Annotation: Source: RMDB library M2PK90, as collected in RNAgym. This 177-nucleotide RNA was probed chemically with 2A3 and DMS. The RNA was probed in 150 mM KOAc, 10 mM MgCl2 and 150 mM bicine (pH 8.5) at 24 C. For DMS, 1,185 sequencing reads were counted. For DMS the reverse transcriptase was MarathonRT. The 2A3 profile rests on 1,891 reads. 2A3 adducts were read by reverse transcription with SuperScript II with manganese. DMS (dimethyl sulfate) methylates the pairing face of unpaired adenines and cytosines.
RNA sequence: GGGAACGACUCGAGUAGAGUCGAAAAUAAAAGAGUGCGUGGUAGCACAAACCAGACGAAUGAUAAGUGCAUGGUCGCACAAGUACAGCUUCGCCUGUACAAAGCGAACAACAACAACAACAAAAAACGAAAUACAGAUGUUCGCAUCUGUAUUUCGAAAAGAAACAACAACAACAAC
Reactivity to 2A3 in 0.01 (KOAc 150mM, MgCl2 10mM, bicine 150mM(pH8.5), 24C), signal-to-noise 2, nucleotides 027 to 126: u160a030a060a010a000g140a030g000u050g000c030g040u050g050g120u140a020g010c000a010c040a110a040a030c030c010a060g080a070c040g110a110a130u130g070a070u080a250a020g020u020g020c030a050u080g110g000u070c000g020c010a060c020a070a060g010u030a010c000a000g010c020u070u190c120g060c030c000u000g000u030a020c000a020a040a000g020c050g030a010a000c010a000a000c030a000a000c010a000a020c000a030a030c020a050a100a020a010a020a010
Reactivity to DMS in 0.01 (KOAc 150mM, MgCl2 10mM, bicine 150mM(pH8.5), 24C), signal-to-noise 2, nucleotides 027 to 126: u010a080a110a140a040g010a190g000u000g020c020g000u010g010g010u000a140g000c020a030c040a010a180a100c070c020a080g020a100c160g000a130a060u000g010a060u030a070a180g000u000g020c050a090u020g010g010u010c060g000c010a020c070a080a090g000u010a010c010a020g010c040u020u000c300g040c150c000u010g000u010a010c040a040a140a090g010c040g030a040a070c010a000a010c060a020a030c010a050a020c050a040a040c030a020a030a030a030a070a100